Notes: Structure probing data (2A3 and DMS) for a 177-nucleotide construct. The RNA was probed in 150 mM KOAc, 10 mM MgCl2 and 150 mM bicine (pH 8.5) at 24 C.

[RMDB]
RNA sequence: GGGAACGACUCGAGUAGAGUCGAAAAGCAUGACAAUUGAAGGUCUUCUGGAUUGGAUAUUUGUAUCCACUGUGGGUGAAGAUGUGGUCAAAUUAAUGACAGAAGGAAAUGAAAUAGACGAUCCAUACAAGUAGGGAGUGUUCGCACUCCCUACUUGAAAAGAAACAACAACAACAAC
Reactivity to 2A3 in 0.01 (KOAc 150mM, MgCl2 10mM, bicine 150mM(pH8.5), 24C), signal-to-noise 2, nucleotides 027 to 126: g020c030a030u110g040a060c010a000a140u090u080g030a130a030g100g000u040c000u100u000c030u070g040g020a080u000u060g010g020a020u040a050u090u040u050g080u060a050u120c020c000a010c030u030g070u150g150g070g110u140g150a040a020g060a070u060g050u070g050g060u000c000a050a000a070u090u170a090a060u110g080a030c000a020g020a090a070g040g040a080a030a010u100g040a040a030a010u050a000g020a010c030g000a010u030c000c050a010u040a180
Reactivity to DMS in 0.01 (KOAc 150mM, MgCl2 10mM, bicine 150mM(pH8.5), 24C), signal-to-noise 3, nucleotides 027 to 126: g000c110a060u010g000a080c090a140a110u010u010g000a180a120g000g000u000c000u010u000c070u000g000g010a070u000u000g050g010a060u000a030u000u000u000g020u000a080u030c010c000a100c030u000g020u000g010g020g010u010g000a130a080g010a070u010g000u000g010g000u000c040a020a040a070u010u000a080a090u010g000a140c020a030g000a090a040g010g000a080a040a080u010g020a040a050a060u000a080g000a120c090g000a030u000c030c010a070u010a140
Background: DMS adducts were read by reverse transcription with MarathonRT. The DMS profile rests on 2,229 reads.